[RMDB]
RNA sequence: GGGAACGACUCGAGUAGAGUCGAAAACGUAGAUACUUCGGUAUCUACGAAAAUAACGCUGGCGUGGGACACAGGCGGAGCUAGCCUCGGAUAGUCUCAGUAAAACAGCAUGGUUCGCCAUGCUGAACUACACACAAACGUUCGCGUUUGUGUGUAGAAAAGAAACAACAACAACAAC
Reactivity to DMS in 0.01 (KOAc 150mM, MgCl2 10mM, bicine 150mM(pH8.5), 24C), signal-to-noise 3, nucleotides 027 to 126: c000g010u000a010g010a010u010a010c000u000u030c170g040g000u000a000u000c000u000a010c000g000a020a040a040a070u010a100a130c140g010c050u010g010g010c080g030u000g000g010g010a040c020a110c100a060g020g000c020g030g010a130g010c120u000a110g000c020c000u000c110g020g000a080u000a080g000u000c020u000c000a100g010u010a060a080a120a110c000a010g010c000a010u000g000g010u010u000c240g010c000c000a000u000g000c000u000g000a020a100
Reactivity to 2A3 in 0.01 (KOAc 150mM, MgCl2 10mM, bicine 150mM(pH8.5), 24C), signal-to-noise 2, nucleotides 027 to 126: c010g000u000a000g010a010u000a020c010u050u070c270g070g000u000a000u010c000u000a000c000g000a000a000a000a000u060a040a020c060g000c090u060g070g040c060g110u050g000g030g000a020c030a000c020a070g080g020c000g020g020a050g050c060u070a020g020c000c020u020c070g070g030a070u060a110g020u010c000u000c020a020g060u090a000a100a020a030c000a000g000c000a000u000g030g000u030u060c180g030c050c010a000u000g000c000u000g000a020a020